[RMDB]
RNA sequence: GGGAACGACUCGAGUAGAGUCGAAAAAGAACGACAUUAGCUAUUAUCUUGGCCACAAGCAAGGCGUAUUACAAGCAAAGGAUUCGCUAAAACCAGAAGUACUGCAGUAUGUGGCGGAUUGGUAUGAGUCAUCCCGUAGUUUCGACUACGGGAUGACAAAAGAAACAACAACAACAAC
Reactivity to 2A3 in 0.01 (KOAc 150mM, MgCl2 10mM, bicine 150mM(pH8.5), 24C), signal-to-noise 1, nucleotides 027 to 126: a000g080a050a020c060g010a000c090a110u100u100a020g020c030u000a000u170u040a020u090c020u060u100g300g000c000c010a030c000a050a000g090c040a040a060g020g000c010g000u000a010u040u050a080c100a180a030g060c000a110a110a030g140g010a080u060u100c000g000c030u080a000a080a080a080c030c060a040g000a140a000g080u140a080c040u020g010c000a000g020u170a020u130g000u020g000g000c080g000g020a020u020u040g040g000u080a100u210g110a010
Reactivity to DMS in 0.01 (KOAc 150mM, MgCl2 10mM, bicine 150mM(pH8.5), 24C), signal-to-noise 2, nucleotides 027 to 126: a070g010a170a060c030g000a100c130a100u000u020a090g000c020u000a070u000u000a050u000c040u000u010g100g010c000c010a000c070a080a290g010c040a070a110g030g000c010g010u000a010u000u010a050c030a060a090g040c220a070a150a080g000g010a090u000u000c050g040c010u000a040a020a170a080c190c040a090g010a170a070g010u020a110c020u000g030c040a150g000u000a050u020g020u010g000g020c000g000g020a040u000u000g000g050u000a100u000g030a130
An RNA of 177 nucleotides, treated with 2A3 and DMS and read out base by base.
The reactions ran in a buffer of 150 mM KOAc, 10 mM MgCl2 and 150 mM bicine (pH 8.5), at 24 C.
Source: RMDB library OK2TRN, as collected in RNAgym.
Reactivities are rounded to 0.1 and cut off at 0 and 3.
DMS adducts were read by reverse transcription with MarathonRT.
DMS (dimethyl sulfate) methylates the pairing face of unpaired adenines and cytosines.